An RNA of 177 nucleotides, treated with 2A3 and DMS and read out base by base. 2A3 adducts were read by reverse transcription with SuperScript II with manganese.
[RMDB]
RNA sequence: GGGAACGACUCGAGUAGAGUCGAAAAGAUAUGGAGCACGCUUCGCCGUCCUAUCUCGGAAACGAGCCGAGGGACGGAACUACGAAACGUGCUCCUAAGUCAAAAGUAAUCACUUCGGUGAUUACAAUCUCCUCCUUACGUUCGCGUAAGGAGGAGAAAAAGAAACAACAACAACAAC
Reactivity to 2A3 in 0.01 (KOAc 150mM, MgCl2 10mM, bicine 150mM(pH8.5), 24C), signal-to-noise 1, nucleotides 027 to 126: g000a000u030a040u250g000g000a000g000c040a000c000g000c000u020u000c000g000c000c000g060u000c000c030u100a160u170c010u000c000g100g050a180a240a180c090g020a150g130c100c070g230a270g000g000g050a010c000g010g020a010a010c070u130a040c010g000a000a000a020c000g010u000g010c030u000c000c000u000a010a000g000u030c000a050a000a000a030g000u010a010a000u000c000a000c030u100u150c300g090g000u000g010a000u000u000a010c000a000a060
Reactivity to DMS in 0.01 (KOAc 150mM, MgCl2 10mM, bicine 150mM(pH8.5), 24C), signal-to-noise 1, nucleotides 027 to 126: g010a040u020a300u010g010g000a010g000c050a020c000g000c040u010u000c010g020c000c000g000u010c000c000u020a120u000c000u000c000g010g000a120a110a150c100g020a070g020c240c030g000a130g020g000g000a000c000g000g000a000a000c180u020a300c030g000a000a000a020c000g000u000g000c010u000c000c000u000a020a040g010u000c100a050a070a060a120g000u000a000a010u000c000a010c000u000u000c160g030g000u000g000a010u000u000a000c000a130a040
For 2A3, 1,814 sequencing reads were counted.